[RMDB]
RNA sequence: GGGAACGACUCGAGUAGAGUCGAAAAGAAACUCGUUUCGCGUUGGCUGCCUAAUUCAAGGAAUUAGCGUUCCUUCAUGCUAAGGGUUUGAUAUCUGCUAAAACCCGGUGCAUUCAUCAAUGCAGGUCUCAUCCAAAUGCCUUCGGGCAUUUGGAAACAAAGAGACAUUGUUCGCAAUGUCUCUUUGAAAAGAAACAACAACAACAAC
Reactivity to 2A3 in 0.01 (KOAc 150mM, MgCl2 10mM, bicine 150mM(pH8.5), 24C), signal-to-noise 4, nucleotides 027 to 156: g060a020a050a000c020u020c040g040u030u080u070c060g010c030g040u060u100g100g000c060u080g010c000c010u050a050a060u070u060c110a150a090g110g000a080a040u020u020a050g010c010g020u030u000c010c000u030u100c060a060u080g010c010u030a030a050g000g000g000u000u000u000g020a020u030a050u080c010u020g010c010u010a020a030a030a000c000c000c000g000g000u020g020c020a030u060u190c030a050u080c060a120a150u150g000c000a000g000g070u010c050u050c040a070u000c000c000a000a000a000u000g010c000c010u040u060c180g050g000g000c010a000u000u000u000g000g030a000a000a000
Reactivity to DMS in 0.01 (KOAc 150mM, MgCl2 10mM, bicine 150mM(pH8.5), 24C), signal-to-noise 4, nucleotides 027 to 156: g000a100a070a070c030u000c050g020u000u010u020c040g020c110g010u000u000g010g010c040u000g010c030c010u010a060a100u000u000c040a110a070g010g030a060a050u000u000a140g020c170g010u000u000c000c000u000u010c060a070u000g020c030u000a300a260g000g010g020u000u000u000g020a150u000a060u000c080u010g010c100u000a120a030a020a030c000c000c010g010g030u000g000c010a060u000u000c050a070u000c090a070a110u000g010c020a070g010g010u000c050u000c050a150u000c000c000a010a020a000u000g000c000c000u000u000c300g060g020g010c000a000u000u000u000g000g000a000a020a070
This 207-nucleotide RNA was probed chemically with 2A3 and DMS. The reactions ran in a buffer of 150 mM KOAc, 10 mM MgCl2 and 150 mM bicine (pH 8.5), at 24 C. For 2A3 the reverse transcriptase was SuperScript II with manganese.